An RNA of 177 nucleotides, treated with DMS and 2A3 and read out base by base.

RNA sequence: GGGAACGACUCGAGUAGAGUCGAAAAACUUCCUGCCAAACUGCUGUUAGUAAGCUUCUAGAUACAUGUUUUGAAGCUACAGAAGCAACAUUUAACUUCUUGUUAGAUUUGGCAGGAUUGUUCAGAAUCCAUAAGCUCAGUUCGCUGAGCUUAUGGAAAAAGAAACAACAACAACAAC
Reactivity to DMS in 0.01 (KOAc 150mM, MgCl2 10mM, bicine 150mM(pH8.5), 24C), signal-to-noise 3, nucleotides 027 to 126: a030c040u010u000c000c000u010g020c010c000a010a050a150c190u000g030c000u000g000u010u020a080g020u000a070a080g010c000u000u000c010u010a040g000a070u000a200c280a130u020g010u000u000u000u000g000a010a000g040c010u000a040c000a070g010a180a050g010c010a030a110c240a070u010u000u000a020a010c020u000u010c290u010u010g000u010u000a020g000a070u000u000u000g000g010c000a020g000g010a010u000u010g010u000u000c100a090g020a200a120
Reactivity to 2A3 in 0.01 (KOAc 150mM, MgCl2 10mM, bicine 150mM(pH8.5), 24C), signal-to-noise 2, nucleotides 027 to 126: a020c010u010u000c000c000u000g000c000c000a030a020a010c060u050g040c010u010g000u170u110a040g000u030a130a090g000c020u010u010c020u010a020g010a070u100a180c220a140u220g050u020u020u010u030g000a000a000g010c000u000a000c000a030g080a030a000g060c020a040a040c010a030u060u070u050a040a020c010u050u030c000u150u300g000u040u070a060g030a150u050u000u020g000g000c000a000g000g000a000u000u060g030u000u000c030a010g060a030a050
Conditions: 150 mM KOAc, 10 mM MgCl2 and 150 mM bicine (pH 8.5), 24 C.